An RNA of 177 nucleotides, treated with DMS and 2A3 and read out base by base.
For 2A3, 807 sequencing reads were counted.
The reactions ran in a buffer of 150 mM KOAc, 10 mM MgCl2 and 150 mM bicine (pH 8.5), at 24 C.
It was measured as part of the RMDB library VIROID.
Values cover nucleotides 27 to 126.
2A3 adducts were read by reverse transcription with SuperScript II with manganese.

RNA sequence: GGGAACGACUCGAGUAGAGUCGAAAAACCGUGUGAGGCCAACAUCAAAGAUGCGUACCUAGCUGCGUUUCAACCUGCGUGGGUUGAGGCGGCUUAGCGGAUUAGGGCGUUCUGCCCCAGUGGUACCGAGACUUAAUCGGUUCGCCGAUUAAGUCUCAAAAGAAACAACAACAACAAC
Reactivity to DMS in 0.01 (KOAc 150mM, MgCl2 10mM, bicine 150mM(pH8.5), 24C), signal-to-noise 1, nucleotides 027 to 126: a130c020c000g000u010g020u000g010a080g030g000c020c100a070a080c070a040u000c100a080a130a140g020a020u000g010c010g000u000a060c010c020u020a060g000c010u000g010c020g030u010u010u000c000a010a000c000c000u000g030c300g020u010g000g000g010u000u000g010a030g030g010c020g020g020c070u000u010a070g000c030g030g000a130u000u010a030g000g000g020c050g000u000u000c110u000g010c000c010c000c010a040g010u010g010g030u000a040c180c200
Reactivity to 2A3 in 0.01 (KOAc 150mM, MgCl2 10mM, bicine 150mM(pH8.5), 24C), signal-to-noise 1, nucleotides 027 to 126: a030c010c010g010u010g020u050g120a090g080g000c060c030a040a000c010a080u130c020a030a110a130g070a080u100g060c070g000u100a210c020c020u000a010g000c000u030g020c010g030u030u020u060c010a000a010c000c000u090g180c250g300u300g000g000g010u000u000g000a000g000g000c040g000g000c040u020u090a010g020c010g070g000a140u160u110a020g020g000g050c000g030u150u030c070u040g000c010c000c000c000a030g060u020g020g020u050a060c060c000